RNA sequence: GGGAACGACUCGAGUAGAGUCGAAAACGAUCACUCUCAGCUGCCAAUCGUGCUACCUCCGUGUGUUGACCUCCUUCGGGGGAGGAAGCCCGACCCCAUCCCUCGUCAAAGCUGCCAUUCUGCAGAGGUAAGCGAGAUAGUUCGCUAUCUCGCUUACAAAAGAAACAACAACAACAAC
Reactivity to DMS in 0.01 (KOAc 150mM, MgCl2 10mM, bicine 150mM(pH8.5), 24C), signal-to-noise 2, nucleotides 027 to 126: c120g000a080u000c060a090c030u010c010u010c030a140g010c020u000g020c020c050a120a120u000c080g020u010g020c020u000a080c030c010u010c040c040g000u000g010u000g030u010u000g000a140c020c010u000c060c040u030u000c070g020g000g000g000g020a070g000g000a140a120g030c000c010c020g000a180c050c030c050c040a130u010c000c000c010u000c030g000u000c100a040a040a110g000c020u000g010c000c070a140u000u000c070u000g010c030a060g020a070g050
Reactivity to 2A3 in 0.01 (KOAc 150mM, MgCl2 10mM, bicine 150mM(pH8.5), 24C), signal-to-noise 1, nucleotides 027 to 126: c030g030a040u100c070a010c070u000c000u000c010a000g010c020u110g060c000c000a040a080u090c080g020u110g120c030u080a060c040c020u050c020c020g090u040g000u010g090u140u170g100a150c000c050u030c010c050u050u100c040g150g020g000g000g000a010g030g070a030a000g070c010c000c000g010a050c000c040c000c030a070u120c000c000c000u080c000g090u020c060a090a060a010g020c010u030g030c030c000a090u070u050c020u070g010c010a050g000a000g240